The record gives the reactivity of an RNA of 177 nucleotides to DMS and 2A3. The DMS profile rests on 1,435 reads.
RNA sequence: GGGAACGACUCGAGUAGAGUCGAAAAAAACGCCGUACACCUAAUGGCAGAGCACAAGAAACAAUUAAUGUCAAUCUGCGCGCAUAAGCAGAACUUGUGACUAAUUGAAGUAUUAAGAAGUAGGGAGCCAGACAGCUGUAUUCGUACAGCUGUCUGGAAAAGAAACAACAACAACAAC
Reactivity to DMS in 0.01 (KOAc 150mM, MgCl2 10mM, bicine 150mM(pH8.5), 24C), signal-to-noise 2, nucleotides 027 to 126: a000a100a050c200g030c000c000g030u040a060c070a180c010c030u010a160a190u100g000g000c000a140g040a140g000c060a060c080a010a030g000a100a120a180c030a010a000u000u050a040a090u030g000u000c050a050a050u000c000u000g000c000g070c300g020c150a140u080a020a150g020c020a020g000a050a300c070u000u030g000u040g030a000c010u010a030a070u020u010g010a100a080g000u000a000u000u010a190a030g000a040a050g050u030a040g000g010g010a100g010
Reactivity to 2A3 in 0.01 (KOAc 150mM, MgCl2 10mM, bicine 150mM(pH8.5), 24C), signal-to-noise 3, nucleotides 027 to 126: a000a010a030c050g000c000c000g000u000a000c080a050c080c040u090a240a010u190g000g000c010a000g070a000g010c030a000c020a130a000g060a000a120a010c060a070a000u040u180a080a120u250g040u000c010a000a010u000c000u000g000c080g000c000g000c060a100u110a260a090g000c000a030g000a010a040c020u080u220g050u060g100a080c020u010a000a020u010u070g060a020a000g020u060a020u130u040a110a160g090a010a000g060u050a000g020g010g010a010g040
Annotation:
DMS adducts were read by reverse transcription with MarathonRT.